This 207-nucleotide RNA was probed chemically with 2A3 and DMS. For 2A3 the reverse transcriptase was SuperScript II with manganese. Conditions: 150 mM KOAc, 10 mM MgCl2 and 150 mM bicine (pH 8.5), 24 C. The data come from the RNA Mapping Database (RMDB), library M2RFPK.

[RMDB]
RNA sequence: GGGAACGACUCGAGUAGAGUCGAAAAAACUCAGCUAGGGAGAGUAUAACAUUCAUGUUGACGCGACCUAGACGAAACACAGAGGAAAAUUAUUAAUCACUGGAUAGUAUUAGUAAUGACUCUGUGUAAAACUCUUCUACGUUCGCGUAGAAGAGAACAAAACAUGUCUGUUCGCAGACAUGUUUUGAAAAGAAACAACAACAACAAC
Reactivity to 2A3 in 0.01 (KOAc 150mM, MgCl2 10mM, bicine 150mM(pH8.5), 24C), signal-to-noise 5, nucleotides 027 to 156: a000a000c020u010c010a010g000c000u010a000g010g010g000a020g000a020g050u080a160u080a300a010c050a020u110u250c090a080u220g000u050u030g040a030c040g000c000g040a020c000c000u010a020g010a030c010g010a000a040a000c000a000c000a000g010a010g020g050a100a160a060a000u000u010a000u000u000a010a000u020c060a010c030u040g050g110a150u300a300g000u010a000u010u000a000g010u010a000a000u010g040a030c000u010c010u000g000u000g000u010a000a000a000a010c000u000c000u000u010c000u000a000c000g020u020u050c210g000c010g100u000a000g000a000a000g000a000g000a000a010
Reactivity to DMS in 0.01 (KOAc 150mM, MgCl2 10mM, bicine 150mM(pH8.5), 24C), signal-to-noise 3, nucleotides 027 to 156: a070a050c030u010c020a100g030c010u000a020g000g000g030a300g010a080g000u010a050u000a040a030c020a070u010u000c100a080u000g000u000u010g010a150c020g000c010g030a230c010c010u000a030g010a100c070g000a130a130a100c000a000c010a020g000a020g010g000a110a080a100a030u000u000a000u000u010a010a020u000c140a070c030u000g030g020a190u000a130g010u000a040u000u000a010g010u000a010a010u000g010a230c010u000c000u000g000u000g000u000a020a020a040a110c000u000c000u000u010c000u000a010c000g000u000u000c300g060c040g030u000a000g010a030a020g010a000g020a030a150